[RMDB]
The record gives the reactivity of an RNA of 177 nucleotides to 2A3 and DMS.

RNA sequence: GGGAACGACUCGAGUAGAGUCGAAAAGAUAUGGAUUCCCAGUAGACAUGAUGCUCGGAAACGAGCAGUCAACAGCUACGGGAAUCCUAAGUCAAAACUGAUCCUUAGCUUCGGCUAAGGAUCAGAAGAUAUAAUACUAGUUCGCUAGUAUUAUAUCAAAAGAAACAACAACAACAAC
Reactivity to 2A3 in 0.01 (KOAc 150mM, MgCl2 10mM, bicine 150mM(pH8.5), 24C), signal-to-noise 4, nucleotides 027 to 126: g010a010u040a020u080g000g000a000u000u020c000c000c050a020g010u000a000g010a070c030a050u030g000a000u010g010c010u000c000g010g000a010a040a020c010g000a000g000c030a000g020u040c000a020a090c080a110g080c000u010a000c000g000g000g000a000a000u000c000c000u000a020a010g020u000c020a010a010a120a180c010u010g000a000u010c000c000u010u010a000g000c010u050u050c300g160g000c000u000a000a000g000g000a000u000c000a010g000a000a000
Reactivity to DMS in 0.01 (KOAc 150mM, MgCl2 10mM, bicine 150mM(pH8.5), 24C), signal-to-noise 5, nucleotides 027 to 126: g010a030u000a210u010g000g000a010u010u000c000c000c000a140g040u000a010g010a270c050a150u000g010a140u000g000c000u000c000g020g000a040a050a110c000g000a000g010c000a010g010u010c010a030a080c300a110g010c010u000a010c010g000g000g000a000a000u000c000c000u000a000a060g010u010c020a090a070a110a170c010u000g000a010u000c000c000u000u000a000g000c000u000u010c190g020g010c000u000a000a010g010g010a000u000c000a000g010a050a080